[RMDB]
RNA sequence: GGGAACGACUCGAGUAGAGUCGAAAAGCAAGGCCUCCCCGCUCAGAUUCGUCUCAGUGUUCCUGUCUUCACAGACAAGAACACUCCUUCCUCUGGGCAUAAGGAGGUUGCCUCUCAUAUCAGGGGCUUAUGACCUUCUUGAGGGGAAGGUCAGACAGGCUAUAUGUAGAUUCGUCUACAUAUAGCCAAAAGAAACAACAACAACAAC
Reactivity to DMS in 0.01 (KOAc 150mM, MgCl2 10mM, bicine 150mM(pH8.5), 24C), signal-to-noise 5, nucleotides 027 to 156: g020c080a120a130g010g000c000c000u000c000c000c020c040g000c010u000c000a030g000a060u000u010c040g010u000c010u000c030a120g000u000g000u000u000c000c010u000g020u000c000u010u000c300a160c230a190g000a030c000a010a000g010a020a010c000a010c000u000c010c030u000u000c050c060u000c010u000g010g020g000c020a140u010a030a040g020g000a020g030g030u000u000g010c000c010u000c000u000c030a140u010a150u000c060a040g030g000g020g040c030u010u000a060u000g000a030c010c000u000u000c010u000u000g010a210g040g010g000g000a020a030g000g010u000c020a020g000a100c070a150
Reactivity to 2A3 in 0.01 (KOAc 150mM, MgCl2 10mM, bicine 150mM(pH8.5), 24C), signal-to-noise 9, nucleotides 027 to 156: g070c070a050a110g040g000c000c000u000c010c000c000c010g000c000u000c000a010g010a070u160u090c060g050u040c100u030c160a010g000u000g000u010u000c010c000u000g000u000c000u120u150c080a060c050a100g000a000c000a000a010g000a000a000c000a000c010u020c000c010u050u040c000c010u010c000u000g000g010g000c010a010u100a030a010g000g010a000g000g000u000u010g000c000c000u020c000u020c050a140u080a120u300c100a030g000g010g010g000c000u020u090a150u110g020a010c000c000u010u010c010u040u080g070a120g010g050g000g020a040a030g000g000u010c000a000g030a020c060a020
The record gives the reactivity of an RNA of 207 nucleotides to DMS and 2A3.
The reactions ran in a buffer of 150 mM KOAc, 10 mM MgCl2 and 150 mM bicine (pH 8.5), at 24 C.
Source: RMDB library OK3TST, as collected in RNAgym.
2A3 adducts were read by reverse transcription with SuperScript II with manganese.